[RMDB]
RNA sequence: GGGAACGACUCGAGUAGAGUCGAAAAGCAUACGGGCGAAAGCCGCGCCCGACGAUCUGACGGAACAACACCUGCGAGCGGGUGGCGCGGACGAUCACGAUCGCGUCGACGAACGGGGCAUUAAACCAGAUCUGUCUGGUUUCGACCAGACAGAUCUAAAAGAAACAACAACAACAAC
Reactivity to DMS in 0.01 (KOAc 150mM, MgCl2 10mM, bicine 150mM(pH8.5), 24C), signal-to-noise 1, nucleotides 027 to 126: g020c090a070u000a140c050g000g030g000c010g090a030a070a300g020c070c020g000c020g030c010c030c010g010a090c110g000a050u000c000u010g000a110c010g000g000a060a060c110a160a180c120a050c000c020u040g000c050g000a080g020c030g000g040g060u000g000g030c120g000c010g000g000a190c050g010a140u000c210a050c070g000a000u000c040g010c090g020u000c010g010a030c090g010a070a050c070g020g000g000g030c100a010u000u000a020a100a060c020c080